Conditions: 150 mM KOAc, 10 mM MgCl2 and 150 mM bicine (pH 8.5), 24 C.
This 177-nucleotide RNA was probed chemically with DMS.
For DMS the reverse transcriptase was MarathonRT.
For DMS, 1,016 sequencing reads were counted.
Reactivities are given for positions 27 through 126.
RNA sequence: GGGAACGACUCGAGUAGAGUCGAAAAAAAGAUAUGGACACUACAGAGCUGUCGUCCACCGAAGAACUUCCUCGGAAACGAGGAAGGGAGGUGGGCGACAGCGACGAAGUAGUGUCCUAAGUCAAAAGUUAAACGGUAUCUUCGGAUACCGUUUAACAAAAGAAACAACAACAACAAC
Reactivity to DMS in 0.01 (KOAc 150mM, MgCl2 10mM, bicine 150mM(pH8.5), 24C), signal-to-noise 1, nucleotides 027 to 126: a050a060a180g030a040u000a300u000g000g000a000c000a000c000u000a010c000a110g050a220g000c020u000g030u000c000g040u000c000c010a000c020c020g060a070a110g020a120a170c000u000u000c000c000u000c000g020g000a100a080a170c010g000a020g010g000a020a000g060g000g020a050g050g000u010g000g000g000c000g000a010c000a000g020c000g010a020c210g000a080a050g000u000a000g030u000g020u000c000c020u020a010a080g010u000c000a080a160a200a120